[RMDB]
RNA sequence: GGGAACGACUCGAGUAGAGUCGAAAAGAUAUGGAUCCUUAGCUAGAGGCAGAGGAUCGGAAACGAUCCGAUCCUCUUGGACCUAAGGAGUCCUAAGUCAAAAGCCAUUCUGUUCGCAGAAUGGCAACGAUUGUCAGGGGUUCGCCCCUGACAAUCGAAAAGAAACAACAACAACAAC
Reactivity to DMS in 0.01 (KOAc 150mM, MgCl2 10mM, bicine 150mM(pH8.5), 24C), signal-to-noise 1, nucleotides 027 to 126: g000a070u020a300u000g030g020a270u000c010c000u000u010a040g000c060u000a060g020a130g000g090c170a110g000a060g010g000a020u000c000g010g010a050a210a200c190g010a020u000c000c010g000a190u000c040c000u000c000u000u020g000g000a100c300c010u000a010a020g000g000a060g000u000c000c000u000a060a100g000u010c080a100a100a180a070g010c020c000a020u000u000c000u010g000u000u000c280g000c020a020g020a020a000u000g000g010c000a000a010